The record gives the reactivity of an RNA of 177 nucleotides to 2A3 and DMS. Reactivities are given for positions 27 through 126. The reactions ran in a buffer of 150 mM KOAc, 10 mM MgCl2 and 150 mM bicine (pH 8.5), at 24 C. The DMS profile rests on 24,322 reads.
[RMDB]
RNA sequence: GGGAACGACUCGAGUAGAGUCGAAAAUUUGGCUAGCUUCAGACUUUACCUUAUUAAUUAGGGAGGAGCGAAAAAGUGCUAAGGAAUUAACCUGUUGGAAUUCCGAUAACAUAUGCAAGGGUCUGGACAAUAUCAUUGAUUUCGAUCAAUGAUAUUGAAAAGAAACAACAACAACAAC
Reactivity to 2A3 in 0.01 (KOAc 150mM, MgCl2 10mM, bicine 150mM(pH8.5), 24C), signal-to-noise 8, nucleotides 027 to 126: u070u040u130g070g000c020u020a040g000c020u030u030c040a060g080a210c040u140u120u160a120c030c000u050u030a070u110u180a300a140u090u050a040g020g010g010a070g010g020a020g020c000g050a030a020a020a050a030g070u060g020c010u020a030a070g020g000a000a010u050u040a110a090c020c030u120g250u180u210g040g030a030a030u030u010c010c000g010a020u070a070a010c010a040u120a050u240g020c040a040a070g070g000g040u010c010u020g010g000a010
Reactivity to DMS in 0.01 (KOAc 150mM, MgCl2 10mM, bicine 150mM(pH8.5), 24C), signal-to-noise 9, nucleotides 027 to 126: u010u010u010g020g010c040u010a100g000c040u000u000c020a100g010a110c070u000u010u010a140c010c010u000u010a270u010u000a080a130u010u000a030g000g000g010a210g010g000a060g020c020g010a060a050a090a100a130g020u000g010c020u010a100a210g000g000a020a020u000u000a100a080c020c030u010g010u000u010g030g020a070a040u000u000c000c000g020a120u000a060a070c050a030u000a060u010g010c060a090a110g010g010g010u000c020u000g000g010a300